[RMDB]
RNA sequence: GGGAACGACUCGAGUAGAGUCGAAAACUCACUUCAAUGACGGUGAUAGAUACUACAUAUCACUCCUGCUUAGAGGGUCAUCUAAGCUAAACCAUGUGAAUAUAACCUUUCGGGCCUCGAGAGACGGAAGUGAGUUCAAUUCUCACCAACUCCACCAUCUUGAUAAAAUCUUCGGAUUUUAUCAAGAAAAAGAAACAACAACAACAAC
Reactivity to 2A3 in 0.01 (KOAc 150mM, MgCl2 10mM, bicine 150mM(pH8.5), 24C), signal-to-noise 6, nucleotides 027 to 156: c000u010c000a000c000u020u020c030a090a230u200g060a090c100g060g020u010g000a010u010a030g070a040u120a240c060u070a050c130a110u060a010u030c000a000c020u040c000c040u060g010c000u010u000a000g000a020g020g060g060u090c040a030u000c040u010a000a000g000c010u030a070a050a010c050c050a100u160g080u040g150a140a020u190a040u030a140a050c010c000u030u050u080c050g130g040g070c060c080u110c070g020a040g010a010g000a030c080g050g000a000a010g000u000g000a000g000u000u010c010a010a030u060u000c010u010c000a050c030c030a050a120c030u030c070c030a060c040c010a060
Reactivity to DMS in 0.01 (KOAc 150mM, MgCl2 10mM, bicine 150mM(pH8.5), 24C), signal-to-noise 2, nucleotides 027 to 156: c000u010c000a030c000u000u010c050a170a080u020g000a050c100g020g020u000g020a070u000a050g010a260u030a130c080u000a090c130a300u000a030u000c030a050c010u000c050c030u000g000c000u010u000a050g000a110g060g020g010u000c080a040u000c050u010a040a090g020c030u000a080a080a110c020c040a120u000g000u060g020a120a120u010a100u010a100a150c060c030u000u000u000c050g020g020g010c050c020u000c030g000a170g010a100g000a040c060g050g020a080a050g010u010g000a040g030u000u000c080a060a180u000u010c020u010c030a050c060c040a050a100c070u010c000c020a110c070c050a190